Notes:
This 207-nucleotide RNA was probed chemically with 2A3 and DMS. Values cover nucleotides 27 to 156. For 2A3 the reverse transcriptase was SuperScript II with manganese. DMS adducts were read by reverse transcription with MarathonRT. The DMS profile rests on 5,672 reads. The reactions ran in a buffer of 150 mM KOAc, 10 mM MgCl2 and 150 mM bicine (pH 8.5), at 24 C. It was measured as part of the RMDB library OK3TST.
RNA sequence: GGGAACGACUCGAGUAGAGUCGAAAAGGGCGCCUGGUCUGUAUCGGUCGAAGCGCUCGGCGCGGCGCAACCCGCACCGCUUCAACGCCGUUCGAGGUCACGACUUCUGUCGCUGCGUCGCCGUUCCGAUCCGCGGCGGAUCCGAUUACGUGGUCCCAUACCAAGGGAGAUUCGUCUCCCUUGGUAUAAAAGAAACAACAACAACAAC
Reactivity to 2A3 in 0.01 (KOAc 150mM, MgCl2 10mM, bicine 150mM(pH8.5), 24C), signal-to-noise 3, nucleotides 027 to 156: g040g030g030c080g050c040c060u090g020g050u100c100u130g050u050a030u010c020g020g020u000c020g000a050a020g000c000g000c030u000c000g000g000c010g010c000g000g020c010g000c020a040a050c010c000c000g010c050a010c010c030g030c010u210u200c170a130a080c150g010c030c020g010u010u020c040g040a170g060g000u110c060a020c090g050a040c040u190u130c150u300g030u060c010g020c110u040g020c010g060u130c010g030c020c020g020u060u010c000c000g000a060u040c030c030g010c010g000g020c020g060g020a050u040c000c010g010a020u080u090a020c050g010u020g010g020u050c000c010c000
Reactivity to DMS in 0.01 (KOAc 150mM, MgCl2 10mM, bicine 150mM(pH8.5), 24C), signal-to-noise 2, nucleotides 027 to 156: g020g000g060c030g020c070c010u010g010g000u000c000u000g030u000a050u010c010g020g000u010c010g030a070a090g020c020g030c060u000c030g010g030c050g040c000g010g030c030g040c080a090a070c070c030c030g030c060a080c040c040g020c220u020u000c060a060a080c040g020c010c030g020u000u020c080g010a110g020g000u000c060a100c030g020a060c020u000u010c130u000g020u010c040g040c000u000g020c050g000u010c000g020c260c030g020u000u000c020c030g000a060u010c040c060g050c050g040g000c000g030g000a020u000c010c000g000a130u010u000a060c070g000u010g010g010u000c020c000c030